[RMDB]
Chemical mapping of a 177-nucleotide RNA with 2A3. The RNA was probed in 150 mM KOAc, 10 mM MgCl2 and 150 mM bicine (pH 8.5) at 24 C. Source: RMDB library RFM100, as collected in RNAgym. Values are in units of 0.01, from 0 to 300, in steps of 10. For 2A3, 859 sequencing reads were counted.
RNA sequence: GGGAACGACUCGAGUAGAGUCGAAAACUGGCGGUAGUAGCAGCAUAGUCGGGUGAGAAUCCCGACCGCCGGAAGGGCAAGGGUUCCACGGCAAUGUUCGUCAGCCGUGGGUGAGUCGGUCCUAAGGACCUGCCACCGCAUUCGUGCGGUGGCAGGUAAAAGAAACAACAACAACAAC
Reactivity to 2A3 in 0.01 (KOAc 150mM, MgCl2 10mM, bicine 150mM(pH8.5), 24C), signal-to-noise 2, nucleotides 027 to 126: c000u010g040g000c020g000g010u050a010g030u150a060g220c090a000g060c060a130u030a060g060u010c000g020g010g010u060g000a020g030a000a030u020c000c000c000g000a000c000c000g020c040c000g000g060a050a020g050g000g040c040a030a070g100g010g000u270u040c000c000a010c000g030g000c150a090a020u090g070u090u200c240g010u090c080a170g230c080c000g030u000g010g030g020u000g000a000g000u000c000g000g000u000c000c000u010a020a000g020g060